[RMDB]
Description:
Structure probing data (2A3 and DMS) for a 177-nucleotide construct. 2A3 adducts were read by reverse transcription with SuperScript II with manganese. Conditions: 150 mM KOAc, 10 mM MgCl2 and 150 mM bicine (pH 8.5), 24 C.
RNA sequence: GGGAACGACUCGAGUAGAGUCGAAAACGCACGGGAUGAAAUACGACCAGGCGACGGGCGAGCGCACGCCGUUGCAUCCCGACAUCGACCUCGAUCACGGUGUGCUGAUUCACGUUCCGGUCCGCGAUCGUGCUUGGACAUUCGUGUCCAAGCACGAAAAAGAAACAACAACAACAAC
Reactivity to 2A3 in 0.01 (KOAc 150mM, MgCl2 10mM, bicine 150mM(pH8.5), 24C), signal-to-noise 2, nucleotides 027 to 126: c020g020c030a040c010g030g010g000a020u020g070a030a180a000u230a120c080g050a080c030c050a080g140g000c030g020a040c030g020g020g020c030g000a070g020c040g020c010a000c000g000c020c000g010u020u090g050c010a020u010c030c000c000g010a030c000a080u110c030g060a090c000c020u010c070g030a020u120c040a010c020g000g000u000g000u030g000c020u030g070a250u170u070c070a090c190g000u160u010c000c000g000g030u090c050c020g040c020g000a050
Reactivity to DMS in 0.01 (KOAc 150mM, MgCl2 10mM, bicine 150mM(pH8.5), 24C), signal-to-noise 1, nucleotides 027 to 126: c180g060c120a100c050g000g000g010a000u010g000a060a200a120u040a050c150g000a030c010c010a080g010g010c040g020a050c000g020g000g000c050g010a160g020c090g000c030a030c030g000c000c000g040u000u010g050c040a040u000c020c010c010g000a050c090a090u000c090g010a190c120c020u020c090g000a040u000c040a060c010g020g020u010g020u020g000c020u020g030a120u080u030c060a100c090g000u000u000c010c000g000g000u000c040c030g020c090g010a060
High DMS reactivity at an A or C suggests that its Watson-Crick edge is free. Source: RMDB library OK2TST, as collected in RNAgym. The DMS profile rests on 870 reads.